[RMDB]
RNA sequence: GGGAACGACUCGAGUAGAGUCGAAAAUAAGCACCUCGUUAGGUGAGGCGGCUACACGAACAUAGGCCACUGACCCCGAACGUCGAGAGACGCCCCGGGUCAGGACAGCUCUUCCCGGCUAAAGGGUAAAAUCACAACGUCUUCGGACGUUGUGAAACGUACAUUUUAUCUUCGGAUAAAAUGUACGAAAAGAAACAACAACAACAAC
Reactivity to 2A3 in 0.01 (KOAc 150mM, MgCl2 10mM, bicine 150mM(pH8.5), 24C), signal-to-noise 2, nucleotides 027 to 156: u170a020a030g020c020a030c000c010u010c030g140u130u300a080g020g110u210g060a010g000g020c050g050g000c020u060a050c070a030c100g140a190a020c050a160u150a090g110g000c010c020a040c030u000g000a000c000c000c010c020g060a120a040c000g000u000c000g020a020g000a000g010a190c000g000c050c030c030c010g000g000g000u000c000a000g000g010a020c030a010g000c000u000c000u050u020c010c000c000g000g010c030u140a120a030a080g050g000g040u100a090a070a020a060u030c000a000c000a000a000c000g000u000c000u040u070c140g070g000a010c000g000u000u000g010u000g000a010a000a000
Reactivity to DMS in 0.01 (KOAc 150mM, MgCl2 10mM, bicine 150mM(pH8.5), 24C), signal-to-noise 1, nucleotides 027 to 156: u000a110a140g010c020a030c050c000u000c050g030u000u000a120g040g060u000g010a050g020g020c000g030g050c000u000a090c060a140c010g030a060a150c130a150u000a070g010g020c000c020a150c030u050g000a010c000c010c000c070g000a040a020c000g020u010c000g030a300g010a300g000a100c010g000c010c000c030c130g000g020g000u000c010a020g050g010a070c070a190g000c000u000c000u000u000c050c020c000g030g030c020u000a070a050a080g010g000g000u010a080a020a160a140u000c000a010c000a000a010c000g000u000c020u010u000c250g090g080a000c000g010u000u000g000u000g020a000a030a030

This 207-nucleotide RNA was probed chemically with 2A3 and DMS. DMS (dimethyl sulfate) methylates the pairing face of unpaired adenines and cytosines. Reactivities are given for positions 27 through 156. The 2A3 profile rests on 1,615 reads. The RNA was probed in 150 mM KOAc, 10 mM MgCl2 and 150 mM bicine (pH 8.5) at 24 C. For DMS the reverse transcriptase was MarathonRT.